Chemical mapping of a 207-nucleotide RNA with 2A3. The RNA was probed in 150 mM KOAc, 10 mM MgCl2 and 150 mM bicine (pH 8.5) at 24 C. The data come from the RNA Mapping Database (RMDB), library M2RFPK. Values cover nucleotides 27 to 156.
[RMDB]
RNA sequence: GGGAACGACUCGAGUAGAGUCGAAAAACGCGGAGUACGCUCCGCGACAACACUUCUUUCGACCCGCUAACCGAGACCUGUGGGUCGUUAAAUUACGUCUCUAUCUUACUCACAUAACAUCGCACAAAAAACGUGGUUCGGUUCGCCGAACCACGAAGUUUUCAUUUCGGUUCGCCGAAAUGAAAACAAAAGAAACAACAACAACAAC
Reactivity to 2A3 in 0.01 (KOAc 150mM, MgCl2 10mM, bicine 150mM(pH8.5), 24C), signal-to-noise 1, nucleotides 027 to 156: a000c020g010c010g000g000a000g000u020a020c100g050c120u010c000c000g060c000g010a000c000a000a090c090a080c150u170u260c030u050u180u100c010g000a000c000c000c000g020c020u010a040a040c050c060g130a030g060a220c070c100u060g010u030g000g000g030u000c020g020u020u050a020a020a010u150u030a040c000g060u040c080u000c030u050a080u030c010u060u090a060c020u010c080a070c030a120u190a110a020c050a130u100c110g090c180a070c140a040a150a050a090a120a030c020g000u000g000g100u000u000c010g000g050u040u030c200g000c040c000g000a000a000c000c000a000c020g000a000a000